[RMDB]
RNA sequence: GGGAACGACUCGAGUAGAGUCGAAAAGAUAUGGACUCCGGCCAGACAUGCUAUUUGGAUCGGAAACGAUCCAUGUAGCAACAGCUGGCGGAGUCCUAAGUCAAAGAUCUCACUUCGGUGAGAUCAACGAGGGAGUAAUGUUCGCAUUACUCCCUCGAAAAGAAACAACAACAACAAC
Reactivity to 2A3 in 0.01 (KOAc 150mM, MgCl2 10mM, bicine 150mM(pH8.5), 24C), signal-to-noise 1, nucleotides 027 to 126: g020a010u020a030u060g010g000a010c000u000c000c030g300g290c040c030a020g030a100c110a240u300g000c010u010a020u010u010u020g000g000a000u010c000g020g000a010a030a020c000g010a000u010c000c000a000u020g010u020a000g050c030a030a030c030a010g040c000u010g000g000c000g030g000a000g000u000c000c000u010a000a000g000u000c010a010a060a080g010a000u000c000u010c020a020c030u020u130c300g170g000u000g000a000g030a000u010c000a010a030
Reactivity to DMS in 0.01 (KOAc 150mM, MgCl2 10mM, bicine 150mM(pH8.5), 24C), signal-to-noise 2, nucleotides 027 to 126: g000a020u010a160u000g010g010a000c010u000c010c000g010g030c010c000a020g000a040c140a300u010g000c000u000a000u000u000u010g000g000a000u000c000g000g000a060a040a070c000g010a010u000c000c000a020u000g010u000a010g020c000a100a050c230a210g000c000u000g000g000c000g020g000a020g000u000c000c000u000a000a100g010u000c030a120a200a160g000a020u000c000u010c040a010c010u000u020c220g060g000u000g010a030g010a000u000c010a030a150
This 177-nucleotide RNA was probed chemically with 2A3 and DMS.
The reactions ran in a buffer of 150 mM KOAc, 10 mM MgCl2 and 150 mM bicine (pH 8.5), at 24 C.
Reactivities are given for positions 27 through 126.